[RMDB]
RNA sequence: GGGAACGACUCGAGUAGAGUCGAAAAGAGGAAUGGGGCCACCACCUGAUUCGCUCGUGGACGCGCAACGCGGAGGCGGCGCAGGACUGGAUGGCGCUCCCAGACCGGGUCGCGGCCAAGCUCGCGCCGGGAACUAUGUGUUCGCACAUAGUUCCCGAAAAGAAACAACAACAACAAC
Reactivity to 2A3 in 0.01 (KOAc 150mM, MgCl2 10mM, bicine 150mM(pH8.5), 24C), signal-to-noise 3, nucleotides 027 to 126: g100a040g020g040a070a060u040g010g010g050g010c010c010a000c010c010a020c000c000u050g020a210u190u090c010g020c070u160c120g030u050g060g060a020c000g040c020g010c220a300a160c170g000c000g070g010a050g050g010c010g020g000c020g020c010a020g000g020a090c170u060g050g010a200u040g000g030c020g040c010u050c010c010c000a020g020a000c020c010g020g040g020u130c010g000c010g020g040c070c100a140a030g040c080u110c050g010c010g000c040
Reactivity to DMS in 0.01 (KOAc 150mM, MgCl2 10mM, bicine 150mM(pH8.5), 24C), signal-to-noise 3, nucleotides 027 to 126: g010a140g020g000a070a140u000g010g000g000g010c030c000a050c020c010a060c040c020u000g000a170u000u020c040g000c000u000c030g000u000g010g010a300c030g040c010g010c220a150a090c130g000c000g020g000a270g010g010c010g000g000c030g000c020a050g010g010a120c140u010g000g010a080u000g000g000c030g010c080u020c020c000c000a060g000a300c010c030g000g000g010u000c030g020c010g000g010c010c100a150a130g000c090u000c020g020c020g000c050
Chemical mapping of a 177-nucleotide RNA with 2A3 and DMS. For DMS, 2,041 sequencing reads were counted. For 2A3 the reverse transcriptase was SuperScript II with manganese.